[RMDB]
The record gives the reactivity of an RNA of 177 nucleotides to 2A3 and DMS. The RNA was probed in 150 mM KOAc, 10 mM MgCl2 and 150 mM bicine (pH 8.5) at 24 C. DMS adducts were read by reverse transcription with MarathonRT.
RNA sequence: GGGAACGACUCGAGUAGAGUCGAAAAUCAGCUCCCGAGAGGGGAUCAGUGGUAAAGAGCAUUGGAACGUCGGAGGAGGCCCCCCAAGAAGUUGAAGAGAAAACAAGAAUCGGAAGUUUUCCCCAUAUCAUUAAGUUAUCUUCGGAUAACUUAAUGAAAAAGAAACAACAACAACAAC
Reactivity to 2A3 in 0.01 (KOAc 150mM, MgCl2 10mM, bicine 150mM(pH8.5), 24C), signal-to-noise 1, nucleotides 027 to 126: u040c010a040g020c010u000c010c020c040g010a020g020a000g000g040g020g010a050u050c020a060g040u040g070g040u150a120a070a010g110a030g040c070a060u070u060g060g010a080a010c030g050u040c060g020g020a000g000g050a010g050g040c020c000c000c000c000c000a010a030g030a050a000g070u070u100g010a090a020g050a020g010a020a050a000a030c040a070a020g060a100a030u070c070g050g020a020a000g000u000u030u040u030c000c000c010c000a040u080a050
Reactivity to DMS in 0.01 (KOAc 150mM, MgCl2 10mM, bicine 150mM(pH8.5), 24C), signal-to-noise 3, nucleotides 027 to 126: u010c060a140g010c060u000c010c010c000g010a240g010a090g020g020g000g010a060u000c110a030g000u000g000g020u000a050a110a090g020a100g000c060a080u010u010g000g000a100a090c050g010u000c120g000g000a060g010g020a080g020g010c020c030c030c030c030c050a110a100g000a050a060g000u000u000g000a070a080g000a090g000a070a040a020a030c050a050a140g010a090a070u000c110g000g020a050a100g010u000u000u000u010c040c000c000c160a090u010a080